[RMDB]
RNA sequence: GGGAACGACUCGAGUAGAGUCGAAAAAGAGUGACUACGGUCACUCAAGAUUGAUGAUACAUUUGGAUCAACCACCUGAUUUCUGAUGUUCUACUGGCGACUGAAUACUCAGUGUACGCACUGAGAAGAUCGUGAACAUCUUCGGAUGUUCACGAUCAAAAGAAACAACAACAACAAC
Reactivity to 2A3 in 0.01 (KOAc 150mM, MgCl2 10mM, bicine 150mM(pH8.5), 24C), signal-to-noise 5, nucleotides 027 to 126: a010g010a000g000u010g000a000c010u010a060c260g070g000u010c010a000c000u000c010a000a010g040a060u090u220g030a060u050g030a020u060a110c030a110u030u020u190g040g020a030u010c000a020a050c010c020a050c000c040u030g020a080u000u080u040c020u040g040a050u070g050u030u040c040u070a100c050u080g070g000c040g070a070c060u080g050a110a040u090a140c000u020c000a010g000u000g010u020a040c280g000c080a000c000u010g000a000g020a050a020
Reactivity to DMS in 0.01 (KOAc 150mM, MgCl2 10mM, bicine 150mM(pH8.5), 24C), signal-to-noise 2, nucleotides 027 to 126: a060g000a030g010u000g000a010c010u000a070c140g020g000u000c000a000c000u000c000a040a070g000a240u000u000g000a050u000g010a100u020a010c140a180u000u040u000g000g000a070u010c040a140a170c050c020a050c020c040u020g000a110u000u000u010c060u040g000a090u020g020u000u000c020u000a020c060u010g000g050c000g000a130c130u000g000a050a100u030a180c000u000c000a000g000u010g040u020a100c170g020c030a020c000u040g000a030g010a100a090